[RMDB]
RNA sequence: GGGAACGACUCGAGUAGAGUCGAAAAGAUAUGGAAGUGUCGCGAUAAGCCAUAGGUCGGAAACGACCUGAUGGCUUUUGACGCGAUUUCCUAAGUCAAAAGAUAGUGUGGUUCGCCACACUAUCAACACCUUAUAGAACUUCGGUUCUAUAAGGUGAAAAGAAACAACAACAACAAC
Reactivity to DMS in 0.01 (KOAc 150mM, MgCl2 10mM, bicine 150mM(pH8.5), 24C), signal-to-noise 9, nucleotides 027 to 126: g000a040u000a300u010g000g010a020a030g000u010g040u000c000g010c000g020a150u000a020a020g010c010c000a010u000a030g010g010u000c000g010g000a090a090a210c000g010a000c000c000u000g010a010u000g000g000c000u000u000u000u000g000a180c050g010c000g010a010u000u000u000c000c000u000a060a160g010u000c040a070a080a130a120g000a010u000a000g010u000g020u000g000g000u000u010c260g010c010c000a010c000a010c000u000a000u000c000a080a180
Reactivity to 2A3 in 0.01 (KOAc 150mM, MgCl2 10mM, bicine 150mM(pH8.5), 24C), signal-to-noise 6, nucleotides 027 to 126: g020a030u070a040u140g010g030a040a000g120u070g060u290c000g000c000g020a050u020a130a020g010c000c010a010u010a010g000g010u000c010g010g030a120a060a060c010g000a010c000c030u050g050a010u010g010g010c010u010u010u010u010g010a020c010g000c000g000a000u010u010u000c000c000u020a110a040g050u020c050a080a020a070a070g000a000u010a010g000u010g010u010g030g070u050u150c260g080c060c000a000c000a010c000u000a000u000c000a010a000